This 177-nucleotide RNA was probed chemically with DMS and 2A3.
For DMS, 1,698 sequencing reads were counted.
In probing experiments dimethyl sulfate is read out at A N1 and C N3, which are open when not base-paired.
DMS adducts were read by reverse transcription with MarathonRT.
The reactions ran in a buffer of 150 mM KOAc, 10 mM MgCl2 and 150 mM bicine (pH 8.5), at 24 C.
[RMDB]
RNA sequence: GGGAACGACUCGAGUAGAGUCGAAAAGAUAUGGAUCGUGGACUCGAUAAGAUUUGAUCGGAAACGAUCAGUGAUCUUUUGACGAGUCCCACGAUCCUAAGUCAAAAGAGCCGGUUCGCCGGCUCAAGCUUGUAUUUAGCUUCGGCUAAAUACAAGCAAAAGAAACAACAACAACAAC
Reactivity to DMS in 0.01 (KOAc 150mM, MgCl2 10mM, bicine 150mM(pH8.5), 24C), signal-to-noise 2, nucleotides 027 to 126: g010a040u030a300u000g000g000a000u000c000g020u000g000g000a060c000u010c010g030a200u010a010a010g000a020u000u000u000g000a000u000c010g000g010a130a050a160c000g000a000u000c000a030g000u000g020a010u000c000u000u000u010u000g020a170c150g000a010g020u000c170c070c030a000c000g000a010u000c000c000u000a000a060g010u010c020a090a100a300a200g000a030g010c000c000g010g010u010u000c220g020c000c000g000g030c020u000c000a000a040
Reactivity to 2A3 in 0.01 (KOAc 150mM, MgCl2 10mM, bicine 150mM(pH8.5), 24C), signal-to-noise 1, nucleotides 027 to 126: g010a020u040a020u090g000g010a000u000c000g000u000g000g010a000c000u000c020g130a140u080a300a010g010a000u160u080u080g000a000u010c000g000g000a030a010a030c020g020a010u020c020a000g060u150g080a030u030c030u130u120u100u160g300a250c120g010a010g000u010c030c010c020a010c000g000a000u010c000c000u010a000a000g000u000c040a100a190a020a000g000a000g000c020c100g020g070u080u120c280g050c140c040g010g000c000u000c000a000a000